[RMDB]
RNA sequence: GGGAACGACUCGAGUAGAGUCGAAAAUGGAUGCGCGGCUGGGACAUGGCGGCAACGCCGAAGACCGAGGGCAGCGAUCCGGAUGCCACGGCCGGCACGAAGAUCGGCAAGUUGCCAGACGGAAGGUAUAUCGUCGCUCAUCACUGCCGCGAUUGGCGAUGUAAACGCAGUUCGCUGCGUUUACAUCAAAAGAAACAACAACAACAAC
Reactivity to 2A3 in 0.01 (KOAc 150mM, MgCl2 10mM, bicine 150mM(pH8.5), 24C), signal-to-noise 2, nucleotides 027 to 156: u140g050g060a060u150g120c010g000c000g000g000c010u050g000g050g010a090c030a100u120g000g000c000g000g000c010a000a060c060g000c030c010g040a040a010g080a020c000c010g020a040g010g010g000c000a020g030c000g020a010u000c000c000g000g010a090u020g020c000c020a040c100g240g010c120c070g000g000c030a020c020g020a030a040g020a070u070c040g010g030c110a060a080g050u060u080g000c010c000a010g100a070c030g020g010a000a040g010g030u070a100u020a020u150c080g000u010c000g030c040u100c090a040u020c030a000c000u000g000c000c000g000c030g030a010u070u080g030g030c100
Conditions: 150 mM KOAc, 10 mM MgCl2 and 150 mM bicine (pH 8.5), 24 C. This 207-nucleotide RNA was probed chemically with 2A3. Reactivities are given for positions 27 through 156. Source: RMDB library OK3TST, as collected in RNAgym.